[RMDB]
RNA sequence: GGGAACGACUCGAGUAGAGUCGAAAACUGUAUGCAUCACGAACAGGGCGAGCCGAUGAUCAUCUGCGGUCUUCGCCACCAUGCCAUUCGGGAAGAGGAUUUCCAUGAUCUUGCCAUACAUCAGAUCUCCAUAUUGGGUGUUCGCACCCAAUAUGGAAAAAGAAACAACAACAACAAC
Reactivity to 2A3 in 0.01 (KOAc 150mM, MgCl2 10mM, bicine 150mM(pH8.5), 24C), signal-to-noise 3, nucleotides 027 to 126: c040u000g000u070a040u090g020c020a040u040c030a040c120g030a130a010c040a060g130g000g000c000g020a010g000c010c010g080a110u080g070a080u150c060a030u070c050u160g080c040g000g010u030c060u050u000c070g010c000c010a010c000c000a030u070g030c000c030a060u050u060c030g020g040g020a030a050g030a100g100g070a080u030u020u030c060c010a050u060g030a040u080c050u040u050g060c060c000a040u070a090c030a070u160c030a050g070a140u050c020
Reactivity to DMS in 0.01 (KOAc 150mM, MgCl2 10mM, bicine 150mM(pH8.5), 24C), signal-to-noise 2, nucleotides 027 to 126: c080u010g000u000a040u000g010c100a100u030c030a050c100g010a090a060c140a090g000g000g030c030g000a080g020c050c010g030a060u000g000a090u010c140a120u000c100u010g020c070g010g020u000c070u020u000c000g040c010c030a070c060c040a050u010g020c050c030a130u010u020c030g000g010g050a000a050g030a080g000g000a140u000u000u000c080c060a090u000g000a030u000c020u000u000g020c080c040a090u000a050c040a100u010c120a110g010a090u010c070
Chemical mapping of a 177-nucleotide RNA with 2A3 and DMS.
Reactivities are given for positions 27 through 126.
2A3 is a SHAPE reagent: it acylates the 2'-hydroxyl of flexible nucleotides of all four kinds.
It was measured as part of the RMDB library OK2TRN.
For DMS, 1,825 sequencing reads were counted.
Conditions: 150 mM KOAc, 10 mM MgCl2 and 150 mM bicine (pH 8.5), 24 C.